[RMDB]
RNA sequence: GGGAACGACUCGAGUAGAGUCGAAAACGUAAAGGGUCUGUGCUGAGGAGGAUUAGUAUAAGAGGAAGGAAUGCCUCUUGCAGUUGAGACAAGAGGAAGGCAUCUGUCUCCUCCCUGUCCCUGGGCACGGUCUGAAUGUGUUCGCACAUUCAGACCGAAAAGAAACAACAACAACAAC
Reactivity to 2A3 in 0.01 (KOAc 150mM, MgCl2 10mM, bicine 150mM(pH8.5), 24C), signal-to-noise 3, nucleotides 027 to 126: c040g100u180a180a000a000g080g020g010u020c060u050g110u060g000c080u060g050a050g020g000a020g060g000a070u110u050a150g110u090a070u020a170a100g010a010g110g000a040a080g070g080a140a040u080g010c030c000u000c040u000u010g000c000a080g040u300u230g010a060g040a120c000a020a020g000a000g020g120a010a060g050g020c000a020u020c040u030g060u010c000u000c000c010u060c010c000c020u020g030u050c020c000c000u000g000g040g000c050a030
Reactivity to DMS in 0.01 (KOAc 150mM, MgCl2 10mM, bicine 150mM(pH8.5), 24C), signal-to-noise 2, nucleotides 027 to 126: c110g010u050a030a060a030g000g000g030u000c100u040g000u010g000c100u030g000a060g000g010a040g010g000a050u000u000a160g010u000a120u050a140a130g020a140g000g010a080a100g000g000a090a100u040g000c000c000u000c000u010u000g020c050a200g030u020u010g010a190g000a090c000a040a040g000a020g000g030a060a060g000g010c050a080u020c050u020g000u000c080u000c000c000u000c000c140c000u040g010u000c020c000c000u000g000g000g000c030a120

Overview: Structure probing data (2A3 and DMS) for a 177-nucleotide construct. It was measured as part of the RMDB library OK1LIB. 2A3 adducts were read by reverse transcription with SuperScript II with manganese. The RNA was probed in 150 mM KOAc, 10 mM MgCl2 and 150 mM bicine (pH 8.5) at 24 C. DMS adducts were read by reverse transcription with MarathonRT.